[RMDB]
RNA sequence: GGGAACGACUCGAGUAGAGUCGAAAAGGUGAGAUGGUAAUCCAUCUCACCAUCCCUACACUAAUGUGUAGGGUUUAUAAGGUAUGAUAAUGCCCUUCAUACCCCUGGAGAGUUGUAGGACUAAUGUCGUACUUCUCUCGAGGAAAAUUGGGCGAAAGGAUCCGUUCACGUUCGCGUGAGCGGAUCCAAAAGAAACAACAACAACAAC
Reactivity to 2A3 in 0.01 (KOAc 150mM, MgCl2 10mM, bicine 150mM(pH8.5), 24C), signal-to-noise 3, nucleotides 027 to 156: g010g000u000g000a000g000a000u010g010g060u220a150a030u110c000c000a000u000c000u000c010a000c000c000a000u000c000c000c000u000a000c000a000c010u200a250a130u300g000u000g000u010a010g000g010g000u000u090u040a140u030a040a000g000g000u000a000u010g030a010u040a140a060u230g000c000c000c000u000u000c000a000u000a010c000c010c010c000u050g070g000a000g000a000g000u020u000g000u020a010g080g020a000c050u160a300a170u300g010u000c080g090u020a000c000u000u000c000u000c000u000c000g040a000g010g030a000a060a000a000u180u090g000g000g000c040g020a050a090a030